[RMDB]
RNA sequence: GGGAACGACUCGAGUAGAGUCGAAAAACACCUGUAGUCCCAGCUACUCGGGAGGCAGAGGUGGGGGGAUUGCAUGAGCCAGGAAGGUCGAGGCUGCAGGGAGCCAAGGUUAUGCCACUGCACUCCAGUGUGGAUGACAAAGCAAGACCCCAUCUCACUAUCCUCUCAUGUUCGCAUGAGAGGAUAGAAAAGAAACAACAACAACAAC
Reactivity to 2A3 in 0.01 (KOAc 150mM, MgCl2 10mM, bicine 150mM(pH8.5), 24C), signal-to-noise 2, nucleotides 027 to 156: a000c020a030c010c000u050g030u070a070g050u060c020c000c010a050g070c090u070a040c020u100c070g070g030g000a000g070g000c030a040g000a000g030g000u040g020g000g000g000g050g100a040u040u030g000c090a080u070g080a040g060c000c000a050g150g090a200a080g060g060u100c070g020a080g020g010c040u040g030c040a020g000g050g000a000g000c000c010a050a010g030g000u050u010a060u080g070c000c020a010c010u040g000c050a110c130u090c050c000a030g010u030g020u100g000g050a060u050g020a030c030a030a050a020g000c000a020a000g020a040c000c000c000c010a010u000c000u000c000a030
An RNA of 207 nucleotides, treated with 2A3 and read out base by base. Reactivities are given for positions 27 through 156. For 2A3, 894 sequencing reads were counted. The reactions ran in a buffer of 150 mM KOAc, 10 mM MgCl2 and 150 mM bicine (pH 8.5), at 24 C. For 2A3 the reverse transcriptase was SuperScript II with manganese.